[RMDB]
RNA sequence: GGGAACGACUCGAGUAGAGUCGAAAAACUAACAAGGAACGUGAGCUGGGUUUAGACCGUCGUGAGACAGGUUAGUUUUACCCUACUGUUGUCAAUUAUUUACGUAAUAGUAGCAUGAUUUAGUACGAAUGCAGUGACUAUUCGUAGUCACUGCAUUAAAAGAAACAACAACAACAAC
Reactivity to DMS in 0.01 (KOAc 150mM, MgCl2 10mM, bicine 150mM(pH8.5), 24C), signal-to-noise 7, nucleotides 027 to 126: a010c000u000a020a020c010a040a050g010g020a280a140c020g000u010g000a050g010c070u040g020g000g010u020u030u040a120g010a140c020c010g010u000c010g010u010g010a150g020a230c040a050g010g000u000u000a000g000u010u000u000u010a180c030c010c000u020a070c100u010g000u010u000g010u010c050a040a070u000u000a060u000u020u000a080c070g000u000a080a070u020a100g020u000a030g020c200a050u010g010a050u000u010u000a080g010u010a060c200g010
Reactivity to 2A3 in 0.01 (KOAc 150mM, MgCl2 10mM, bicine 150mM(pH8.5), 24C), signal-to-noise 2, nucleotides 027 to 126: a000c000u010a010a000c030a080a020g160g000a080a000c020g040u080g070a050g000c120u300g030g000g060u080u110u170a060g030a010c000c000g020u020c000g000u020g020a050g000a090c020a080g030g070u030u010a000g000u000u000u000u010a030c000c000c000u020a080c080u010g000u070u030g030u010c040a090a060u060u020a020u070u080u110a010c060g000u080a020a050u070a100g050u000a100g080c190a030u040g030a120u060u020u210a040g000u030a020c080g010
Structure probing data (DMS and 2A3) for a 177-nucleotide construct. The data come from the RNA Mapping Database (RMDB), libraries RFM100 and RFMREP.